[RMDB]
RNA sequence: GGGAACGACUCGAGUAGAGUCGAAAAGAGAAGAAGCCAUGGGUGACCGUCGAGGAGGCGGGCUUCGUCCAGGCCAAGGAGCCGCCGCUCCAAGACACCAACCUCACAAACUUCAACAUCAGCGUGGUAUGUCAGCAGUUUUCGAACUGCUGACAUAAAAAGAAACAACAACAACAAC
Reactivity to DMS in 0.01 (KOAc 150mM, MgCl2 10mM, bicine 150mM(pH8.5), 24C), signal-to-noise 2, nucleotides 027 to 126: g000a090g000a220a110g010a080a090g000c030c150a170u000g010g010g010u010g010a110c280c080g010u000c010g000a300g000g000a120g000g000c030g000g010g020c060u000u000c010g000u010c110c020a030g000g100c090c050a120a090g000g000a020g010c020c010g000c140c020g000c090u000c000c010a040a260g010a040c040a050c050c020a110a020c060c010u020c140a120c080a090a140a120c080u000u000c060a050a110c090a080u000c020a070g000c140g000u000g000g000